[RMDB]
RNA sequence: GGGAACGACUCGAGUAGAGUCGAAAAUACUCUCCUGCAACCUUGUGAGCUUUUGGGAGAUGCUACAAAUGCCUGUACAGUAUCAAGUCCCAUCUGUAGUGGUUUUGUUCCUAAAGGCAACUGGGACCUUAUCUCUAGCUUUCGAGCUAGAGAUAAGAAAAGAAACAACAACAACAAC
Reactivity to 2A3 in 0.01 (KOAc 150mM, MgCl2 10mM, bicine 150mM(pH8.5), 24C), signal-to-noise 4, nucleotides 027 to 126: u100a020c030u040c020u020c040c010u020g070c040a100a180c040c020u080u090g050u080g120a150g050c010u100u060u030u050g000g010g000a070g020a060u130g080c020u030a030c020a060a090a040u070g030c010c010u140g110u150a020c000a030g100u120a060u260c060a070a050g060u030c020c010c000a010u030c010u020g030u020a080g090u080g080g030u020u030u080u110g060u050u020c000c000u030a040a020a020g060g000c020a030a030c070u050g000g000g020a020c010
Reactivity to DMS in 0.01 (KOAc 150mM, MgCl2 10mM, bicine 150mM(pH8.5), 24C), signal-to-noise 5, nucleotides 027 to 126: u010a110c140u000c050u000c010c020u010g020c160a080a100c030c030u000u010g020u010g010a120g010c060u000u000u000u000g000g010g000a040g010a060u000g000c140u020a070c050a040a050a060u010g020c030c020u010g000u000a030c050a050g010u010a090u000c110a070a140g010u000c010c020c000a070u000c030u010g000u000a030g010u010g010g020u000u000u000u000g010u000u000c000c000u000a040a040a060g000g010c070a170a070c130u000g010g000g010a110c140
Chemical mapping of a 177-nucleotide RNA with 2A3 and DMS.
It was measured as part of the RMDB library OK2TRN.
Values cover nucleotides 27 to 126.
The 2A3 profile rests on 4,367 reads.
High DMS reactivity at an A or C suggests that its Watson-Crick edge is free.
For DMS, 5,450 sequencing reads were counted.